[RMDB]
Background: Chemical mapping of a 177-nucleotide RNA with 2A3 and DMS. For DMS, 24,366 sequencing reads were counted.
RNA sequence: GGGAACGACUCGAGUAGAGUCGAAAAAGCGCGCAAUGUGUACAUGGGUAUUCCCCCAUAUCUGUGUACUAUAGCUGAGAGGACUUGCUUUUUGGGGGAUGCAGUGCAAGUUUAUUUGGUGCGCGAAGUGUAUAUAAAAUUUCGAUUUUAUAUACACAAAAGAAACAACAACAACAAC
Reactivity to 2A3 in 0.01 (KOAc 150mM, MgCl2 10mM, bicine 150mM(pH8.5), 24C), signal-to-noise 9, nucleotides 027 to 126: a000g040c000g000c000g000c020a050a110u150g030u020g000u070a000c000a010u010g020g000g000u000a010u020u030c000c010c000c000c000a000u000a000u000c000u000g010u000g000u020a000c020u080a030u160a060g090c130u160g090a050g020a050g130g050a010c000u000u010g020c000u080u180u060u120u080g010g000g000g000g010a010u050g100c110a030g080u050g030c000a000a000g000u000u020u030a140u040u090u090g060g010u030g010c010g000c000g020a080a010
Reactivity to DMS in 0.01 (KOAc 150mM, MgCl2 10mM, bicine 150mM(pH8.5), 24C), signal-to-noise 6, nucleotides 027 to 126: a130g020c020g010c000g040c000a170a080u020g020u010g000u000a000c020a000u000g000g000g000u000a010u010u010c000c000c000c000c000a190u000a010u000c010u000g000u000g000u000a010c000u020a090u030a150g000c110u030g010a140g000a140g010g000a010c000u000u000g010c020u000u010u010u020u010g020g010g010g010g010a010u010g010c210a070g010u020g010c000a010a010g000u000u010u010a060u020u010u010g010g020u010g010c000g010c000g010a020a100
Overview
DMS adducts were read by reverse transcription with MarathonRT. The data come from the RNA Mapping Database (RMDB), library OK1LIB.